RNA sequence: GGGAACGACUCGAGUAGAGUCGAAAACACGGAGCCGUGACGUGCUAGCCAGGCAGCGCGUCGUUCAGGACACGGACCUGAAUUGGCGGAACCGUCGGAGUGUCCGUGACCGAGUUCGCGACUCGACGGAGGUUCGGACGUUCGCGUUCGGACUUCCAAAAGAAACAACAACAACAAC
Reactivity to 2A3 in 0.01 (KOAc 150mM, MgCl2 10mM, bicine 150mM(pH8.5), 24C), signal-to-noise 9, nucleotides 027 to 126: c050a000c010g020g000a020g020c010c010g050u090g010a010c000g010u020g010c010u040a070g070c030c090a070g050g060c020a000g010c010g000c000g000u010c010g010u040u020c020a030g000g020a010c010a000c030g020g030a010c000c000u000g040a080a050u070u140g020g000c000g010g030a070a080c080c000g010u020c020g040g030a070g030u170g030u000c000c000g000u010g010a010c010c010g000a010g030u060u060c030g000c010g040a010c000u000c010g020a010c040
Reactivity to DMS in 0.01 (KOAc 150mM, MgCl2 10mM, bicine 150mM(pH8.5), 24C), signal-to-noise 9, nucleotides 027 to 126: c070a080c050g000g000a120g010c020c020g010u010g010a030c020g010u000g010c010u000a090g010c030c070a070g000g010c110a040g010c010g010c010g010u000c020g010u010u000c040a070g000g000a190c010a030c040g000g000a040c010c010u000g010a050a120u040u020g010g010c000g000g010a080a110c090c010g020u000c040g010g010a090g010u030g010u000c000c000g010u000g000a120c060c010g000a060g010u020u010c120g010c060g000a150c010u000c020g000a160c140